[RMDB]
RNA sequence: GGGAACGACUCGAGUAGAGUCGAAAAGAUAUGGAAUAAGUGGAGUAAUGCGAUGGACCCACCUGAGGGUCGGAAACGACCCGAGAUGAGGUGCCAUCGCAUUACGAUGAAACUUAUUCCUAAGUCAUCAAGGUAUAAAGUUCGCUUUAUACCUUGAAAAAGAAACAACAACAACAAC
Reactivity to DMS in 0.01 (KOAc 150mM, MgCl2 10mM, bicine 150mM(pH8.5), 24C), signal-to-noise 6, nucleotides 027 to 126: g010a040u000a300u010g000g010a010a000u000a010a000g010u000g000g010a030g010u000a010a010u000g000c000g000a020u000g000g000a080c010c000c000a020c020c000u010g020a230g020g010g010u010c000g010g000a080a090a260c010g020a020c000c000c010g000a060g000a020u000g000a150g010g000u000g010c010c000a000u000c000g000c000a000u000u000a000c000g000a080u010g000a080a140a010c000u000u000a010u000u000c000c000u000a020a080g010u010c030a170
Reactivity to 2A3 in 0.01 (KOAc 150mM, MgCl2 10mM, bicine 150mM(pH8.5), 24C), signal-to-noise 2, nucleotides 027 to 126: g010a010u100a040u130g000g010a020a010u000a010a010g020u010g020g040a030g000u020a000a010u010g000c010g000a000u000g030g000a020c000c010c000a010c000c030u070g100a300g020g010g000u010c010g020g000a140a120a020c000g000a010c000c040c020g010a010g000a020u080g030a070g050g050u150g300c020c000a000u000c010g000c000a000u000u000a000c000g010a000u010g000a000a000a000c000u000u000a000u010u000c000c000u010a070a010g040u010c010a050